Background: Structure probing data (DMS and 2A3) for a 177-nucleotide construct. For DMS, 4,360 sequencing reads were counted. The RNA was probed in 150 mM KOAc, 10 mM MgCl2 and 150 mM bicine (pH 8.5) at 24 C. It was measured as part of the RMDB library OK1LIB.

[RMDB]
RNA sequence: GGGAACGACUCGAGUAGAGUCGAAAAGAAGAGAAGCGCGCGAAUUGGAAACCAGCGAACCCUAUUACGCGCGCAAGGAACCGGGCCUUGGUUCAUUGGAAAGACUAGAUAAUUUCGCUGGUAAAGAAUGCCUACUGAUAUUCGUAUCAGUAGGCAUAAAAGAAACAACAACAACAAC
Reactivity to DMS in 0.01 (KOAc 150mM, MgCl2 10mM, bicine 150mM(pH8.5), 24C), signal-to-noise 3, nucleotides 027 to 126: g000a180a070g000a190g010a180a200g010c000g050c000g040c000g010a060a060u050u000g020g000a130a110a070c010c000a000g000c010g000a020a100c190c010c020u000a040u010u000a070c000g040c000g020c030g000c010a010a020g000g030a060a040c000c000g030g000g000c060c040u000u010g000g000u000u010c030a100u020u010g000g010a100a050a110g000a080c110u010a100g010a130u020a040a050u030u010u000c020g010c000u000g010g010u030a030a040a100g000a150
Reactivity to 2A3 in 0.01 (KOAc 150mM, MgCl2 10mM, bicine 150mM(pH8.5), 24C), signal-to-noise 4, nucleotides 027 to 126: g080a050a010g100a000g040a150a010g020c000g020c000g000c010g020a000a010u050u040g010g060a060a060a100c000c000a000g020c000g000a030a060c010c000c010u020a030u030u100a130c000g000c010g010c000g000c000a000a010g080g000a020a000c000c020g070g180g070c030c040u060u120g030g010u010u020c020a040u080u140g030g050a160a060a010g060a080c090u120a080g090a180u210a250a130u040u040u030c000g000c050u000g020g000u030a000a010a010g070a000